The record gives the reactivity of an RNA of 177 nucleotides to DMS and 2A3. The DMS profile rests on 1,748 reads. The RNA was probed in 150 mM KOAc, 10 mM MgCl2 and 150 mM bicine (pH 8.5) at 24 C. Values cover nucleotides 27 to 126. It was measured as part of the RMDB library OK2TRN. For 2A3, 1,349 sequencing reads were counted. For 2A3 the reverse transcriptase was SuperScript II with manganese.

[RMDB]
RNA sequence: GGGAACGACUCGAGUAGAGUCGAAAAGCAGGUACGGCCGCCGUACCAAAUUGUACGAGGCCGCACACGCAGAUGUUCGUGGGUCCUUGAAUCACUUUAUUCCUGAGCUUGGCCCCAUUAAUGUUACCGAUUAUGACCCUUUCGAGGGUCAUAAUCGAAAAGAAACAACAACAACAAC
Reactivity to DMS in 0.01 (KOAc 150mM, MgCl2 10mM, bicine 150mM(pH8.5), 24C), signal-to-noise 3, nucleotides 027 to 126: g000c040a130g030g040u000a010c010g000g000c020c000g000c240c000g030u000a010c010c300a000a060a090u010u010g020u000a010c000g040a300g020g000c000c000g050c020a010c010a120c100g000c020a090g010a050u000g010u000u000c070g010u000g020g000g000u020c010c000u000u010g010a120a080u000c040a020c050u010u000u010a180u050u020c160c120u010g000a020g010c030u000u000g000g000c090c000c000c010a030u000u010a030a040u010g010u000u000a120c120
Reactivity to 2A3 in 0.01 (KOAc 150mM, MgCl2 10mM, bicine 150mM(pH8.5), 24C), signal-to-noise 1, nucleotides 027 to 126: g000c020a030g080g000u010a030c030g000g000c030c000g060c110c020g010u000a020c020c050a030a190a230u200u110g020u000a010c030g000a020g000g000c000c000g040c010a000c000a010c010g000c010a020g000a100u050g030u080u070c020g010u010g010g030g000u000c010c020u030u030g060a110a140u060c030a020c080u000u200u180a120u200u280c030c010u050g040a040g000c000u020u010g020g020c040c000c000c010a020u000u100a030a030u060g080u060u010a100c000